[RMDB]
Chemical mapping of a 177-nucleotide RNA with DMS and 2A3. The reactions ran in a buffer of 150 mM KOAc, 10 mM MgCl2 and 150 mM bicine (pH 8.5), at 24 C. It was measured as part of the RMDB library OK2TST.
RNA sequence: GGGAACGACUCGAGUAGAGUCGAAAACAGCCAGAUCAAAAGAUGCAGUCGAUCGAGGCGCACUCUGUGAUGGUCACGCUAAUGGUCACGUCAGCCGGUCCCCGUCCGCCCGUUUUGCCUGUGCUGAACAUAACCUAGGUUUCGACCUAGGUUAUGUAAAAGAAACAACAACAACAAC
Reactivity to DMS in 0.01 (KOAc 150mM, MgCl2 10mM, bicine 150mM(pH8.5), 24C), signal-to-noise 9, nucleotides 027 to 126: c100a110g010c030c030a150g010a070u000c050a060a080a110a070g000a100u000g010c040a090g030u000c060g010a070u000c130g010a130g010g010c030g010c070a060c050u000c040u010g010u010g010a080u000g010g000u000c040a090c100g020c040u000a060a110u000g010g000u000c050a060c080g010u000c060a070g010c030c030g010g010u000c030c010c020c040g000u010c040c040g000c030c020c030g010u000u000u000u000g000c060c020u000g000u000g020c050u000g000a120
Reactivity to 2A3 in 0.01 (KOAc 150mM, MgCl2 10mM, bicine 150mM(pH8.5), 24C), signal-to-noise 5, nucleotides 027 to 126: c020a010g040c010c010a030g010a100u080c030a000a080a110a050g060a050u090g060c040a030g070u060c020g070a120u040c060g040a140g010g030c030g000c020a030c030u050c020u030g060u040g080a090u070g030g020u050c030a010c090g020c020u070a090a090u140g030g000u040c030a010c070g040u030c020a010g030c020c020g020g020u060c010c000c000c000g030u040c000c010g010c000c000c000g020u040u020u060u100g020c010c010u030g020u040g030c030u030g020a040